[RMDB]
RNA sequence: GGGAACGACUCGAGUAGAGUCGAAAAGCGGUUGGAAUGGGGGAGGCGAUAUUUUUACCCAUAAUUUCGGCCAGUGUGAUUGGUGGUUAUCAGCGUACGACCACGCCUUUACCUUAUGCCAUCGGCAUCUUCCAAAAGAUUUCGAUCUUUUGGAAGAAAAAGAAACAACAACAACAAC
Reactivity to 2A3 in 0.01 (KOAc 150mM, MgCl2 10mM, bicine 150mM(pH8.5), 24C), signal-to-noise 4, nucleotides 027 to 126: g050c040g010g010u040u040g030g060a110a090u080g010g000g030g010g000a010g000g000c010g020a010u010a080u090u140u020u070u070a100c000c010c020a030u120a150a070u050u070u050c030g030g000c020c070a110g030u080g010u020g150a200u070u090g020g020u030g020g060u060u080a040u090c030a010g030c000g040u050a020c030g030a010c010c010a020c010g030c000c000u080u060u120a230c000c000u060u090a050u110g030c020c000a070u040c030g010g020c000a040
Reactivity to DMS in 0.01 (KOAc 150mM, MgCl2 10mM, bicine 150mM(pH8.5), 24C), signal-to-noise 6, nucleotides 027 to 126: g020c040g010g010u000u010g000g010a110a040u010g010g000g020g010g000a070g010g000c030g010a060u010a010u000u010u000u000u010a140c040c020c040a090u010a080a080u000u000u000c070g010g010c020c030a080g010u000g020u000g000a090u000u000g010g030u010g000g010u000u010a080u000c080a080g010c130g000u000a060c100g000a050c060c060a160c030g010c020c020u000u000u000a130c020c020u000u000a040u000g010c010c010a050u000c070g010g010c060a150

An RNA of 177 nucleotides, treated with 2A3 and DMS and read out base by base. The RNA was probed in 150 mM KOAc, 10 mM MgCl2 and 150 mM bicine (pH 8.5) at 24 C. As a SHAPE reagent, 2A3 marks flexible, mostly unpaired nucleotides at the ribose 2'-OH.